Chemical mapping of a 177-nucleotide RNA with DMS and 2A3. For DMS, 1,949 sequencing reads were counted. The data come from the RNA Mapping Database (RMDB), library VIROID.
RNA sequence: GGGAACGACUCGAGUAGAGUCGAAAAAGAGGGGAAGAGUGAGGCUUAUCCCGGGGAACUCGGCGUAUCGUCCCCACAUAGCAGCUCCCGAGCCCCCUCCUAAAAUGACCGGAGGUGGAGCUUGGAGGUGUAAUGGAUAGUUCGCUAUCCAUUACACAAAAGAAACAACAACAACAAC
Reactivity to DMS in 0.01 (KOAc 150mM, MgCl2 10mM, bicine 150mM(pH8.5), 24C), signal-to-noise 2, nucleotides 027 to 126: a110g000a100g020g000g010g010a060a090g020a060g010u000g010a050g000g000c050u010u010a110u000c030c020c010g000g000g000g000a110a070c060u000c070g010g010c120g010u000a090u000c050g000u000c020c000c000c030a120c180a100u000a070g010c070a100g000c010u000c040c000c010g010a040g020c010c000c000c000c030u000c000c000u010a040a050a090a120u000g010a090c260c170g010g010a020g010g000u000g010g000a100g030c000u010u000g000g000a020g000
Reactivity to 2A3 in 0.01 (KOAc 150mM, MgCl2 10mM, bicine 150mM(pH8.5), 24C), signal-to-noise 2, nucleotides 027 to 126: a030g090a070g040g000g020g000a040a080g030a040g060u050g110a040g100g000c020u060u060a070u110c000c000c010g000g020g010g010a070a040c040u030c070g070g000c070g060u110a060u130c050g020u000c000c000c060c000a050c010a010u240a010g150c070a010g030c010u050c000c040c020g000a000g010c030c000c000c000c000u030c000c000u190a260a300a160a150u260g100a080c080c040g000g010a000g010g030u200g000g000a060g000c000u010u000g020g000a020g040

The reactions ran in a buffer of 150 mM KOAc, 10 mM MgCl2 and 150 mM bicine (pH 8.5), at 24 C.